Overview: Structure probing data (DMS and 2A3) for a 170-nucleotide construct.
[RMDB]
RNA sequence: GGGAACGACUCGAGUAGAGUCGAAAAGUUGGUGGUACAGGAUUACAGUAUGCCGCCAUUACUGCACCUUAUGUAGUUCUCACUGGCUUAGGUGAGUCCUUUAAGAAAGUUGCAACCAUACCGUAUAGAGCCAACGAGUUCGCUCGUUGGAAAAGAAACAACAACAACAAC
Reactivity to DMS in 0.01 (KOAc 150mM, MgCl2 10mM, bicine 150mM(pH8.5), 24C), signal-to-noise 9, nucleotides 027 to 129: g030u040u020g030g030u000g040g000u040a110c120a140g050g040a210u070u040a090c130a100g060u030a110u000g000c050c040g050c020c020a040u040u010a040c050u010g000c030a050c080c030u020u000a110u040g050u070a090g020u050u000c030u000c030a000c030u030g020g070c160u090u080a100g020g040u000g020a030g030u030c040c050u020u020u000a100a080g020a070a040a030g020u080u020g010c050a030a040c060c020a090u040a040c050c040g000u000a060u000a110g020a110g000
Reactivity to 2A3 in 0.01 (KOAc 150mM, MgCl2 10mM, bicine 150mM(pH8.5), 24C), signal-to-noise 9, nucleotides 027 to 129: g060u030u010g000g000u020g000g030u040a040c040a090g080g090a230u160u130a070c030a030g140u140a060u090g020c010c010g000c000c000a030u050u140a060c040u010g010c010a010c020c000u030u010a090u140g160u110a030g020u040u010c010u010c020a010c010u050g170g080c140u190u200a050g030g000u000g000a000g010u040c020c000u080u110u080a090a040g070a060a100a010g050u100u040g010c010a020a030c000c020a050u100a120c010c010g050u060a120u070a110g140a020g050
The RNA was probed in 150 mM KOAc, 10 mM MgCl2 and 150 mM bicine (pH 8.5) at 24 C. For DMS the reverse transcriptase was MarathonRT.